[RMDB]
RNA sequence: GGGAACGACUCGAGUAGAGUCGAAAAACCCCUUCAGCGAACGGAGGGCUCUCUCACACGGCAGGAGUAAGACCAUAGCGUAGGAAGAGAUGCUAGGAGUUAGGGGAGACCGGAGCGAGGAGAAAAGCAUACAUAGCGGGUUCGCCCGCUAUGUAUGAAAAGAAACAACAACAACAAC
Reactivity to DMS in 0.01 (KOAc 150mM, MgCl2 10mM, bicine 150mM(pH8.5), 24C), signal-to-noise 2, nucleotides 027 to 126: a040c090c000c010c100u010u010c040a130g020c100g000a060a060c110g000g020a110g010g000g010c070u000c020u010c010u010c030a120c070a090c140g000g050c050a080g020g000a100g000u020a040a110g000a060c040c040a090u010a070g000c030g000u000a010g000g020a090a070g010a090g020a050u000g000c030u000a060g030g000a090g000u000u000a040g020g010g010g000a050g000a090c040c010g000g010a060g010c050g030a080g010g000a060g010a050a040a050a130g020
Reactivity to 2A3 in 0.01 (KOAc 150mM, MgCl2 10mM, bicine 150mM(pH8.5), 24C), signal-to-noise 2, nucleotides 027 to 126: a010c010c000c010c000u020u050c020a060g010c030g070a040a030c040g040g000a020g040g060g000c020u020c000u000c010u020c020a060c010a010c080g060g050c050a020g000g040a030g050u110a080a010g100a060c030c020a100u070a030g020c030g020u010a040g060g030a070a010g060a020g010a040u100g030c020u030a030g000g060a090g020u090u080a050g050g010g010g020a040g020a020c000c050g010g020a040g000c040g000a040g020g020a020g070a030a080a010a000g020